[RMDB]
RNA sequence: GGGAACGACUCGAGUAGAGUCGAAAAUGUGAAGGGGGAGGUGCGCACGCCGUGCCUCUGGGCGACAUCCACUUUGGCUCCAACCGCGAGGAGCCGUGGCCAAAGUUUUCUAACAAUGUGCUCAACCGCAUGCGGCUUUAUCUUGGCCGGCGUCGCGUACUACUUUCUGUUUCGACAGAAAGUAGUAAAAAGAAACAACAACAACAAC
Reactivity to 2A3 in 0.01 (KOAc 150mM, MgCl2 10mM, bicine 150mM(pH8.5), 24C), signal-to-noise 3, nucleotides 027 to 156: u170g030u080g030a070a090g000g000g010g030g000a040g000g010u060g030c010g010c020a000c040g040c060c010g070u150g020c000c020u000c040u010g010g020g000c040g030a070c020a040u040c030c020a040c000u080u080u070g000g000c000u000c040c020a080a080c020c060g050c050g070a100g010g040a000g000c020c010g000u010g010g000c000c040a030a020a020g020u070u050u150u030c060u060a090a090c040a120a090u050g010u070g020c020u010c050a030a040c080c010g060c080a070u110g030c020g030g020c030u130u190u060a120u060c080u080u200g010g010c010c000g050g000c020g010u010c070g000c010g000
Reactivity to DMS in 0.01 (KOAc 150mM, MgCl2 10mM, bicine 150mM(pH8.5), 24C), signal-to-noise 2, nucleotides 027 to 156: u020g060u000g000a080a080g000g010g020g020g050a110g040g030u000g010c040g010c020a090c070g000c010c010g060u010g040c000c010u030c090u020g010g000g000c030g020a060c090a080u000c030c070a070c050u000u000u000g010g030c000u000c090c010a060a170c000c050g000c100g000a220g040g010a110g030c000c020g030u000g030g000c020c010a040a040a050g010u000u000u000u000c190u010a100a140c130a090a090u000g030u000g010c020u000c030a040a080c030c050g010c030a120u010g010c020g000g000c030u010u000u000a040u010c090u000u000g010g030c020c000g010g010c040g020u010c010g030c030g010
Conditions: 150 mM KOAc, 10 mM MgCl2 and 150 mM bicine (pH 8.5), 24 C. The record gives the reactivity of an RNA of 207 nucleotides to 2A3 and DMS. For DMS, 3,952 sequencing reads were counted. The data come from the RNA Mapping Database (RMDB), library OK3TST.